[RMDB]
RNA sequence: GGGAACGACUCGAGUAGAGUCGAAAAGCACAGUGGGAGUCAGUCUGAGCAAGGGCGGCAACGUUUCGUUGACGAAGGAGGCUCCCGGACUGACCGCCGUCGUGGUGGGUCUGGGCUGGGACGUGCGCACCACGACCGGAACCGACUUCGACCUCGAAAUAUGGUAACAUUUCGAUGUUACCAUAUUAAAAGAAACAACAACAACAAC
Reactivity to DMS in 0.01 (KOAc 150mM, MgCl2 10mM, bicine 150mM(pH8.5), 24C), signal-to-noise 2, nucleotides 027 to 156: g010c030a050c040a070g060u010g010g000g000a040g010u000c000a090g020u000c010u000g000a080g010c060a130a250g000g020g020c090g030g060c040a050a060c040g020u000u000u000c070g010u010u010g010a140c050g000a080a090g010g060a260g000g000c010u000c010c030c020g020g010a060c030u020g000a050c020c000g010c010c080g010u010c120g030u000g040g050u000g000g040g030u000c000u000g010g010g020c080u000g010g010g000a120c040g030u000g000c100g010c130a110c050c020a020c040g000a070c050c010g020g000a060a060c030c020g020a100c030u000u000c020g010a170c100c010u020c010g010a140
Reactivity to 2A3 in 0.01 (KOAc 150mM, MgCl2 10mM, bicine 150mM(pH8.5), 24C), signal-to-noise 2, nucleotides 027 to 156: g050c010a020c010a060g020u040g010g020g010a030g030u000c020a000g020u020c040u070g050a030g020c040a040a090g050g010g020c030g000g040c030a060a040c080g030u080u120u170c050g020u020u050g040a080c020g020a000a020g020g020a020g050g000c030u010c020c010c000g010g010a020c020u050g080a020c000c020g040c020c030g100u230c070g040u090g020g000u010g040g050g010u010c020u060g030g030g040c040u050g020g010g050a050c020g030u090g020c120g010c050a080c040c000a010c020g020a010c010c010g000g040a040a050c010c020g020a020c000u020u030c040g060a090c010c030u030c020g020a010

This 207-nucleotide RNA was probed chemically with DMS and 2A3.
For 2A3, 4,499 sequencing reads were counted.
It was measured as part of the RMDB library OK3TST.
The reactions ran in a buffer of 150 mM KOAc, 10 mM MgCl2 and 150 mM bicine (pH 8.5), at 24 C.
Reactivities are given for positions 27 through 156.